[RMDB]
RNA sequence: GGGAACGACUCGAGUAGAGUCGAAAAUCCGACUCUCAUAGGCUCUCCAACCCAACUCCUCCUCAAUACGUCCUCGUCGUACAGAACGGUAACAUGUUUUCCGAACAUCCGCGCUUGGGUAUACGAGAAAGGCGUAGAUUAUUCGUAAUCUACGCAACUACUGGAUUGGGUUCGCCCAAUCCAGUAGAAAAGAAACAACAACAACAAC
Reactivity to 2A3 in 0.01 (KOAc 150mM, MgCl2 10mM, bicine 150mM(pH8.5), 24C), signal-to-noise 1, nucleotides 027 to 156: u000c020c000g060a030c000u020c010u040c090a130u100a190g030g050c010u020c020u000c080c060a110a100c000c010c010a070a080c060u060c080c040u100c000c000u050c020a000a040u030a130c080g020u020c000c020u010c040g030u020c010g010u030a020c010a090g060a040a010c010g030g020u110a040a000c020a040u050g130u060u000u010u170c070c030g030a030a020c020a080u090c070c040g060c040g040c090u090u030g000g000g010u040a030u040a130c040g010a010g070a040a030a000g100g000c000g000u000a000g000a000u000u000a030u010u060c110g010u050a000a010u000c000u000a000c000g020c000a030a000
Notes: Structure probing data (2A3) for a 207-nucleotide construct. It was measured as part of the RMDB library M2RFPK. Conditions: 150 mM KOAc, 10 mM MgCl2 and 150 mM bicine (pH 8.5), 24 C.